[RMDB]
RNA sequence: GGGAACGACUCGAGUAGAGUCGAAAAUGGCCUCGUUUAGAAGGCUUGCCGUACAGCUGUGGUCACGGGGGCUGUACGGGACGUUUACGUGACUGGGCUUGUCUGCACCAUGUCGGUGUGAGUGCAGGAGCCGAGCAAUAACGACAGCAUCGACUGCCACCCCUGUUUACUUCGGUAAACAGGGGUGAAAAGAAACAACAACAACAAC
Reactivity to 2A3 in 0.01 (KOAc 150mM, MgCl2 10mM, bicine 150mM(pH8.5), 24C), signal-to-noise 3, nucleotides 027 to 156: u130g120g000c010c000u010c050g090u150u190u250a240g030a300a040g050g000c010u010u240g010c010c010g020u000a010c000a000g000c010u050g000u100g210g040u000c000a000c000g070g030g080g010g000c000u010g010u000a000c000g000g010g000a020c050g020u090u240u210a050c010g000u010g000a000c010u020g000g000g000c000u000u020g020u080c010u000g000c000a000c020c000a000u010g000u000c000g000g000u000g000u000g020a070g010u000g000c000a000g000g000a000g000c000c000g000a010g020c150a020a220u120a180a010c010g060a030c060a040g040c010a040u000c000g000a000c000u000g020c030
Chemical mapping of a 207-nucleotide RNA with 2A3. For 2A3 the reverse transcriptase was SuperScript II with manganese. The data come from the RNA Mapping Database (RMDB), library RSTRND.